An RNA of 177 nucleotides, treated with 2A3 and DMS and read out base by base. For 2A3, 928 sequencing reads were counted. Values are in units of 0.01, from 0 to 300, in steps of 10. The reactions ran in a buffer of 150 mM KOAc, 10 mM MgCl2 and 150 mM bicine (pH 8.5), at 24 C.

RNA sequence: GGGAACGACUCGAGUAGAGUCGAAAAAUCUUCAUUUCGCAACUUCCUGCUUUUAACUCAGAAUUAGUCAAUUUCCUUUUUGGCAAUAUUCUUUGGGUAACCACCCAAGAUCUCUUUAGACUAGGAAACUAAGAGUCAUCUUCGGAUGACUCUUAGUAAAAGAAACAACAACAACAAC
Reactivity to 2A3 in 0.01 (KOAc 150mM, MgCl2 10mM, bicine 150mM(pH8.5), 24C), signal-to-noise 1, nucleotides 027 to 126: a000u010c010u090u040c040a060u070u100u080c050g030c080a030a020c010u030u000c000c010u000g040c070u070u130u100u140a110a110c070u010c090a020g050a020a040u010u050a050g040u000c030a030a050u090u040u140c040c000u040u150u080u000u050g010g010c030a100a000u020a010u230u000c010u090u040u010g000g030g000u030a050a100c060c040a010c000c030c010a040a010g010a040u030c110u020c010u080u100u170a120g010a080c040u070a040g100g000a120a120
Reactivity to DMS in 0.01 (KOAc 150mM, MgCl2 10mM, bicine 150mM(pH8.5), 24C), signal-to-noise 2, nucleotides 027 to 126: a030u020c050u010u020c030a080u020u020u010c050g000c070a070a070c100u000u000c030c000u000g020c070u010u010u000u010a070a110c080u010c080a090g000a050a040u000u000a220g010u000c030a030a050u000u010u040c070c060u000u000u000u020u010g010g000c030a100a060u010a040u010u000c010u000u000u000g040g000g010u010a110a130c220c190a130c010c000c020a040a070g000a030u000c060u000c030u010u000u000a090g020a080c130u000a050g010g000a090a080